[RMDB]
RNA sequence: GGGAACGACUCGAGUAGAGUCGAAAAUAUGAACUAAGCCAAAGGGGCAAUGUCUUAUUAAUUGAACCAACAAGACCUCUGGCUGAAAAUGUGCACAGACAGUUGCAAGGACCUCCAUUUAUGACAACGCUGUAAGCGAGUUCGCUCGCUUACAGCGAAAAGAAACAACAACAACAAC
Reactivity to DMS in 0.01 (KOAc 150mM, MgCl2 10mM, bicine 150mM(pH8.5), 24C), signal-to-noise 1, nucleotides 027 to 126: u000a030u030g000a090a130c020u000a160a100g000c030c010a020a020a050g000g010g010g000c110a050a090u040g020u000c050u000u020a000u010u010a020a140u020u000g060a040a190c110c080a080a060c050a020a080g020a070c000c000u000c010u020g060g000c030u000g000a020a060a080a000u020g060u020g000c080a010c020a040g050a180c170a000g020u020u070g000c060a120a020g000g030a110c000c030u000c000c040a020u000u000u000a120u030g000a180c080a120a200
Reactivity to 2A3 in 0.01 (KOAc 150mM, MgCl2 10mM, bicine 150mM(pH8.5), 24C), signal-to-noise 1, nucleotides 027 to 126: u160a010u000g030a000a000c010u000a040a030g020c020c020a240a150a210g060g000g000g080c070a100a170u020g010u000c000u140u250a210u150u300a210a210u110u300g090a000a050c050c000a000a030c140a020a030g050a060c030c000u030c040u040g000g000c000u000g000a010a000a010a010u120g040u070g030c000a060c000a150g070a050c040a060g110u170u140g080c000a000a000g040g000a000c000c000u040c040c000a030u030u040u060a130u290g060a070c000a000a000